[RMDB]
RNA sequence: GGGAACGACUCGAGUAGAGUCGAAAACCGGAAUGGUUCCGCCGUGAUCGGGCCAUGCAAUAGUUGCCAACGACAACUAUGCUCCGGUUGCUCAGGCAGCGUAACGCUGCUUGAAAGACCAAAUGAAUUAGCGCGACAUUGUUCGCAAUGUCGCGAAGACCGAGGAAAGGUUCGCCUUUCCUCGGUCAAAAGAAACAACAACAACAAC
Reactivity to 2A3 in 0.01 (KOAc 150mM, MgCl2 10mM, bicine 150mM(pH8.5), 24C), signal-to-noise 2, nucleotides 027 to 156: c010c000g020g010a060a010u120g050g010u240u300c010c060g000c040c130g180u160g020a250u090c030g000g000g000c000c000a010u040g000c030a050a300u000a000g000u000u040g010c040c040a090a060c100g170a160c000a000a000c040u000a000u000g020c080u020c020c010g000g000u000u000g000c000u000c020a020g010g000c000a000g000c020g010u110a220a010c220g000c020u000g000c000u000u010g000a030a020a010g020a000c000c000a000a000a080u220g100a030a100u220u070a090g060c010g000c000g000a000c000a000u050u080g020u060u050c140g000c040a000a020u000g000u000c000g000c000g010a010a000